[RMDB]
RNA sequence: GGGAACGACUCGAGUAGAGUCGAAAAGUGCUUUGAAAACAGCCGGCGUUGUGACAGGUAAUGUUGUAAAACAGUGUUGCACUGCUGCUGUUGAUUUAAGUAUGGAUAAGUUGCGCCGUGUGGAUUGGAAGGCUAAACUUCGGUUUAGCCAAAAGAAACAACAACAACAAC
Reactivity to DMS in 0.01 (KOAc 150mM, MgCl2 10mM, bicine 150mM(pH8.5), 24C), signal-to-noise 6, nucleotides 027 to 129: g040u020g020c020u000u000u000g000a090a090a020a020c000a030g030c050c120g030g000c020g060u000u030g030u020g000a000c030a070g000g000u010a070a080u030g000u000u000g020u040a090a090a040a020c020a050g010u000g030u000u000g030c020a020c040u020g030c000u020g030c020u000g000u030u000g010a130u030u010u050a020a020g040u020a050u000g000g000a150u040a060a120g000u010u010g000c010g000c050c030g020u010g030u030g030g020a130u020u000g010g010a250a170
Reactivity to 2A3 in 0.01 (KOAc 150mM, MgCl2 10mM, bicine 150mM(pH8.5), 24C), signal-to-noise 4, nucleotides 027 to 129: g030u000g000c040u080u040u060g060a000a000a000a000c000a030g050c070c100g040g000c000g000u040u010g000u020g020a010c030a000g040g120u230a180a180u110g050u070u040g240u210a050a080a060a000c010a000g030u000g000u040u000g000c000a020c030u030g000c020u000g000c010u000g000u010u000g000a040u030u070u050a020a010g020u010a060u070g090g010a070u060a130a190g070u070u080g020c030g000c080c000g060u060g030u060g090g050a100u030u050g060g030a180a090